[RMDB]
RNA sequence: GGGAACGACUCGAGUAGAGUCGAAAACGGUCCUGCCAUGAGACCGUAACGAGGACAUGUCGCCUCGAAUGGCGUCGGGGAGCCGGCAGCUUACCCCAAGGAUGAGCGCCUUAUGCCGGUACCCGGGUAUACGCUACCCCGUUCGCGGGGUAGCGAAGACAAAUUGUUUCUUCGGAAACAAUUUGUCAAAAGAAACAACAACAACAAC
Reactivity to 2A3 in 0.01 (KOAc 150mM, MgCl2 10mM, bicine 150mM(pH8.5), 24C), signal-to-noise 1, nucleotides 027 to 156: c040g000g010u010c000c020u030g030c000c000a030u020g010a020g000a060c010c000g060u040a010a000c010g000a010g000g010a000c040a160u230g070u130c090g020c030c000u010c000g000a010a010u020g020g000c030g080u040c020g020g010g020g020a140g120c010c010g020g000c000a020g010c000u040u080a080c000c030c010c100a050a100g000g020a080u120g030a000g010c000g050c040c080u130u080a100u150g000c000c000g000g030u020a040c000c000c000g010g030g000u300a170u060a030c020g000c000u010a000c010c000c010c000g030u050u010c160g000c020g030g020g050g000u000a000g000c000g000a000a000

Annotation: Structure probing data (2A3) for a 207-nucleotide construct. For 2A3, 966 sequencing reads were counted. The reactions ran in a buffer of 150 mM KOAc, 10 mM MgCl2 and 150 mM bicine (pH 8.5), at 24 C. For 2A3 the reverse transcriptase was SuperScript II with manganese.